RNA sequence: GGGAACGACUCGAGUAGAGUCGAAAAAACUGUUGAGGUGGGAACCGCCACCCCACGCACUUGGCCGCAAAGCCAAGUAAUUAACCGCCGUAACGCGGCCAAGAGAUCGCGGUUGGCAACGCGCGACAUUAGCUAUCGGCGUUCGCGCCGAUAGCAAGACAAUAUCUGACUUCGGUCAGAUAUUGUCAAAAGAAACAACAACAACAAC
Reactivity to 2A3 in 0.01 (KOAc 150mM, MgCl2 10mM, bicine 150mM(pH8.5), 24C), signal-to-noise 1, nucleotides 027 to 156: a000a000c040u050g000u020u010g010a000g020g000u010g010g020g010a130a170c060c150g000c050c000a040c000c000c000c000a000c000g040c010a010c000u000u000g000g000c000c000g120c200a050a060a030g000c020c020a000a060g010u030a010a010u070u030a050a000c000c020g010c040c040g120u140a060a050c070g000c010g020g000c000c020a020a000g010a010g000a010u060c010g010c000g000g010u000u100g030g060c000a050a060c000g020c000g000c000g030a000c070a170u180u170a050g000c050u040a000u000c000g030g010c000g040u050u080c260g000c000g000c050c000g010a000u000a000g050c000a000a000